[RMDB]
RNA sequence: GGGAACGACUCGAGUAGAGUCGAAAAAGCUUGCUCUCCGGUGUCAGGCUGACUAAGCCAAAGUUCUGCAACAUUAACUCCCAAAGCUUUUGCAUAAACAGGAUCAAGAGCAUGCUCAGCAUCAAUACAGUAUUUUACCGUUCGCGGUAAAAUACUGAAAAGAAACAACAACAACAAC
Reactivity to DMS in 0.01 (KOAc 150mM, MgCl2 10mM, bicine 150mM(pH8.5), 24C), signal-to-noise 3, nucleotides 027 to 126: a080g020c010u000u000g030c020u010c010u000c080c040g030g030u000g000u020c080a160g020g020c010u000g000a120c160u030a060a090g010c020c040a070a090a180g020u000u010c070u000g020c050a040a040c180a040u000u000a070a090c140u000c010c010c020a110a120a100g010c080u000u000u000u000g000c020a040u010a060a100a060c070a160g000g010a070u000c130a090a050g010a030g010c020a030u000g010c030u000c120a100g010c110a070u010c110a060a080u020a140
Reactivity to 2A3 in 0.01 (KOAc 150mM, MgCl2 10mM, bicine 150mM(pH8.5), 24C), signal-to-noise 2, nucleotides 027 to 126: a000g010c010u020u040g020c000u000c000u000c060c030g000g000u040g090u080c080a060g000g000c020u020g050a190c080u130a060a030g010c010c030a030a100a020g030u060u050c060u040g000c000a020a030c000a100u100u110a080a070c040u030c000c000c000a020a060a000g000c030u010u030u140u100g000c010a010u080a110a160a090c030a060g000g060a030u060c070a030a030g020a000g020c000a010u020g000c000u020c030a040g040c020a110u100c050a090a100u170a180
This 177-nucleotide RNA was probed chemically with DMS and 2A3. The 2A3 profile rests on 2,113 reads. DMS adducts were read by reverse transcription with MarathonRT. Conditions: 150 mM KOAc, 10 mM MgCl2 and 150 mM bicine (pH 8.5), 24 C. Reactivities are given for positions 27 through 126. 2A3 adducts were read by reverse transcription with SuperScript II with manganese.